[RMDB]
RNA sequence: GGGAACGACUCGAGUAGAGUCGAAAAUUCGGAGUCGGUGCACACCUUCGCCAACACCAUCAACACCCACGAGGGCGGCACCCACGAAGAGGGCUUCCGCAGCGCGCUGACGUCGGUGGUGAACAAGCGUUAAAGCUUUUUUCGAAAAGCUUUAACGAAAAGAAACAACAACAACAAC
Reactivity to 2A3 in 0.01 (KOAc 150mM, MgCl2 10mM, bicine 150mM(pH8.5), 24C), signal-to-noise 9, nucleotides 027 to 126: u100u060c030g030g010a040g030u040c020g020g020u070g020c050a030c010a020c150c000u030u040c020g020c030c010a040a030c020a030c040c010a030u060c030a020a070c030a070c040c020c010a040c040g020a090g010g070g000c020g000g000c020a030c000c010c010a050c080g080a090a060g060a150g050g020g010c030u090u020c020c010g020c020a040g050c030g000c000g000c040u060g020a050c030g020u030c020g010g010u030g010g020u030g020a040a030c040a090a010g060
Reactivity to DMS in 0.01 (KOAc 150mM, MgCl2 10mM, bicine 150mM(pH8.5), 24C), signal-to-noise 7, nucleotides 027 to 126: u010u020c050g010g010a150g000u010c120g000g010u010g020c050a080c060a080c030c030u000u010c020g010c100c060a070a130c060a090c040c050a040u020c060a080a080c160a070c050c040c010a130c100g000a110g010g020g030c060g000g000c300a230c020c010c020a050c070g030a160a090g000a100g000g010g020c060u000u010c020c030g020c040a060g020c070g010c020g010c050u000g000a090c080g020u000c030g010g040u000g000g000u000g010a090a060c150a060a100g010